[RMDB]
RNA sequence: GGGAACGACUCGAGUAGAGUCGAAAAGACGCCUGAUGGCGAACGUGCGCAAGAUAAGAAUGGUGGUAUAUACUGCCUAGAAUAACUAAUGGACGGCAGAGCGCACGAACCACCAAAGUCCACCAGAAUACUCCUCCCAUUUCGAUGGGAGGAGUAUAAAAGAAACAACAACAACAAC
Reactivity to 2A3 in 0.01 (KOAc 150mM, MgCl2 10mM, bicine 150mM(pH8.5), 24C), signal-to-noise 4, nucleotides 027 to 126: g030a000c000g040c010c020u240g160a230u300g030g000c000g000a030a030c000g030u010g000c000g000c030a060a000g050a260u160a140a040g050a080a030u030g020g000u020g000g020u000a080u000a000u010a120c000u010g000c000c000u040a020g100a170a170u180a120a020c080u150a130a130u140g130g060a010c030g000g000c000a010g030a010g040c000g020c000a000c030g000a000a000c020c010a020c000c010a020a010a020g050u000c000c000a010c000c030a000g110a030
Reactivity to DMS in 0.01 (KOAc 150mM, MgCl2 10mM, bicine 150mM(pH8.5), 24C), signal-to-noise 4, nucleotides 027 to 126: g020a110c040g070c000c000u000g000a150u030g010g010c000g000a080a160c030g010u000g000c000g020c000a120a090g040a180u020a070a080g010a110a140u010g000g000u000g020g010u000a140u030a090u000a140c010u010g000c000c000u010a210g000a100a090u020a130a100c220u110a050a070u040g000g000a050c160g000g000c000a000g000a200g010c020g010c020a000c030g010a050a070c040c030a120c150c060a050a060a150g040u000c000c000a010c010c000a130g000a100
Description
Chemical mapping of a 177-nucleotide RNA with 2A3 and DMS. Values cover nucleotides 27 to 126. The RNA was probed in 150 mM KOAc, 10 mM MgCl2 and 150 mM bicine (pH 8.5) at 24 C. DMS adducts were read by reverse transcription with MarathonRT.